Chemical mapping of a 207-nucleotide RNA with DMS and 2A3. Source: RMDB library M2RFOK, as collected in RNAgym. For DMS, 1,675 sequencing reads were counted. The RNA was probed in 150 mM KOAc, 10 mM MgCl2 and 150 mM bicine (pH 8.5) at 24 C.
RNA sequence: GGGAACGACUCGAGUAGAGUCGAAAACGGUAUUGGUCAAGGCUAUACCGACAGCGCACCUUCAAAAGGGCGCUUAAUCCCCGGCCAAGCGCCGAAAUAUGAAUAGACACCGCCGGGCUGGUAGGGCAAAACAUGGCGAUCUUCGGAUCGCCAUGAACAGUUACAACACGUUCGCGUGUUGUAACUGAAAAGAAACAACAACAACAAC
Reactivity to DMS in 0.01 (KOAc 150mM, MgCl2 10mM, bicine 150mM(pH8.5), 24C), signal-to-noise 1, nucleotides 027 to 156: c000g030g000u030a050u000u010g030g000u000c000a080a080g010g060c000u000a040u010a040c010c010g000a130c110a060g020c040g100c030a120c020c020u010u010c180a060a170a150a200g030g000g030c000g010c010u000u010a000a080u000c040c000c000c080g000g040c000c050a210a170g030c080g010c020c040g000a080a050a150u010a150u020g020a220a240u010a210g000a070c020a070c030c080g000c030c010g020g010g020c020u000g000g010u000a060g000g010g000c020a050a060a090a300c000a030u000g010g020c000g020a000u000c010u010u000c300g070g000a020u000c050g050c000c000a000u000g000a030a120
Reactivity to 2A3 in 0.01 (KOAc 150mM, MgCl2 10mM, bicine 150mM(pH8.5), 24C), signal-to-noise 2, nucleotides 027 to 156: c010g000g010u020a010u080u240g040g040u110c090a140a070g090g000c000u010a010u000a010c000c000g010a060c050a040g000c030g000c070a300c160c010u080u130c050a040a100a070a020g000g000g000c000g000c000u000u000a000a000u020c000c010c000c020g000g000c000c000a190a020g030c080g000c120c000g050a110a070a000u280a060u100g030a100a050u020a060g030a020c010a040c090c020g010c010c010g020g030g020c030u040g010g010u060a100g000g030g000c060a110a020a000a000c000a000u020g000g000c010g000a000u000c000u030u010c050g050g000a000u000c000g010c030c000a000u000g000a000a000